[RMDB]
RNA sequence: GGGAACGACUCGAGUAGAGUCGAAAAGUCGUCGGUGUCUCGAAGCACACCGCGCCGUCGAGACGGAACUGUUCAAGGAAGAACUCGUUGCCGCUGACCGUCCUACCGGAUACCAUCGCCAAGUCAAGUCGGAUUUAUAGUUCGCUAUAAAUCCGACAAAAGAAACAACAACAACAAC
Reactivity to 2A3 in 0.01 (KOAc 150mM, MgCl2 10mM, bicine 150mM(pH8.5), 24C), signal-to-noise 2, nucleotides 027 to 126: g070u050c020g040u040c040g010g000u040g020u020c040u020c130g140a080a030g040c060a010c020a020c030c030g000c040g010c020c010g050u020c020g020a070g050a070c000g020g030a090a050c030u030g020u080u050c040a060a100g210g030a110a130g050a050a000c020u010c130g030u030u040g070c000c000g030c000u020g030a060c020c000g050u000c010c000u040a070c000c030g060g000a040u060a060c020c020a040u080c020g000c060c010a070a020g120u060c020a120a040
Reactivity to DMS in 0.01 (KOAc 150mM, MgCl2 10mM, bicine 150mM(pH8.5), 24C), signal-to-noise 3, nucleotides 027 to 126: g000u000c020g020u000c020g010g010u000g010u010c010u010c130g020a190a150g020c120a080c060a100c050c020g010c040g000c060c060g000u010c020g010a100g030a150c020g010g000a090a070c050u020g000u000u000c040a110a170g020g000a150a130g000a050a100c020u000c070g010u010u000g020c010c030g000c060u000g010a080c030c010g010u010c010c010u000a100c180c100g000g000a110u000a110c020c030a050u010c090g000c010c080a090a130g020u010c120a080a130
Annotation:
An RNA of 177 nucleotides, treated with 2A3 and DMS and read out base by base. For 2A3 the reverse transcriptase was SuperScript II with manganese. For DMS, 1,744 sequencing reads were counted. For DMS the reverse transcriptase was MarathonRT. The reactions ran in a buffer of 150 mM KOAc, 10 mM MgCl2 and 150 mM bicine (pH 8.5), at 24 C. Reactivities are given for positions 27 through 126.